RNA sequence: GGGAACGACUCGAGUAGAGUCGAAAAGCAGUCGCUGCAGCGUUACCUAAACCAAGUUGAACGUCAAUUGUGACAUGUUCAUGAGUUAAUGUGUUCGACAUAGCUUGCUCAUCAAAUAGUACAGCCAGUCACGUGAGAGCUUCGGCUCUCACGUGACAAAAGAAACAACAACAACAAC
Reactivity to 2A3 in 0.01 (KOAc 150mM, MgCl2 10mM, bicine 150mM(pH8.5), 24C), signal-to-noise 1, nucleotides 027 to 126: g060c020a020g060u010c020g000c020u060g010c000a000g040c000g150u040u030a120c020c010u160a080a080a110c040c000a020a020g000u000u000g110a000a020c000g060u070c000a090a180u060u300g150u090g000a000c200a210u210g010u140u120c000a010u080g000a020g080u110u300a110a040u060g090u010g010u270u190c000g000a000c050a060u160a090g000c020u000u040g000c000u000c000a120u010c010a050a120a120u300a120g190u130a040c070a000g000c010c010a020
This 177-nucleotide RNA was probed chemically with 2A3. For 2A3, 332 sequencing reads were counted. The RNA was probed in 150 mM KOAc, 10 mM MgCl2 and 150 mM bicine (pH 8.5) at 24 C. The data come from the RNA Mapping Database (RMDB), library OK1LIB.